RNA sequence: GGGAACGACUCGAGUAGAGUCGAAAACAUAAUCCAGACCAGCCUCAAGACAAGCCCCCUGACUGGUUCACAAGCUACCUAGAGACAUUCAGAGAGCAAGUGGUUAAAGAAACGGUUGAAAAGCUUGUCUAAGCACAGUGUUCGCACUGUGCUUAGAAAAAGAAACAACAACAACAAC
Reactivity to DMS in 0.01 (KOAc 150mM, MgCl2 10mM, bicine 150mM(pH8.5), 24C), signal-to-noise 2, nucleotides 027 to 126: c150a070u020a130a100u010c020c020a090g010a070c100c010a070g020c020c010u000c150a100a070g010a050c030a110a030g000c030c010c010c040c030u010g010a030c040u010g000g010u000u000c010a060c100a080a190g000c010u000a000c070c030u000a080g040a090g010a090c130a060u000u000c040a090g000a090g000a060g050c010a020a160g000u010g010g010u000u000a040a040a080g000a100a060a080c090g040g020u000u050g010a040a010a120a040g070c010u000u000g000

About this RNA:
Conditions: 150 mM KOAc, 10 mM MgCl2 and 150 mM bicine (pH 8.5), 24 C. Structure probing data (DMS) for a 177-nucleotide construct. The DMS profile rests on 901 reads. Reactivities are rounded to 0.1 and cut off at 0 and 3. Reactivities are given for positions 27 through 126. For DMS the reverse transcriptase was MarathonRT.